[RMDB]
RNA sequence: GGGAACGACUCGAGUAGAGUCGAAAAGAAGUGGCAGGGACAUGCCCCACAAGCUCGUUCUAGCAACAUAUGUUUGGCUAGUUCGAGCGAUUAGUCUGGAGGAGCGUCCUCUCGCCUAUUGACGAGAAAAUUAGCGCGUAUUCGUACGCGCUAAUUUAAAAGAAACAACAACAACAAC
Reactivity to 2A3 in 0.01 (KOAc 150mM, MgCl2 10mM, bicine 150mM(pH8.5), 24C), signal-to-noise 4, nucleotides 027 to 126: g130a100a020g070u040g030g000c000a000g000g000g000a020c030a020u160g070c010c020c000c000a030c000a000a020g010c000u000c000g000u000u000c000u010a000g010c000a020a030c060a160u300a030u280g150u110u080u110g140g090c000u000a000g000u000u000c000g000a000g020c000g000a000u030u020a040g060u010c180u110g060g010a150g020g020a060g100c030g020u020c000c000u000c010u020c050g050c000c000u030a090u100u130g040a010c050g050a010g140a080

An RNA of 177 nucleotides, treated with 2A3 and read out base by base. The reactions ran in a buffer of 150 mM KOAc, 10 mM MgCl2 and 150 mM bicine (pH 8.5), at 24 C.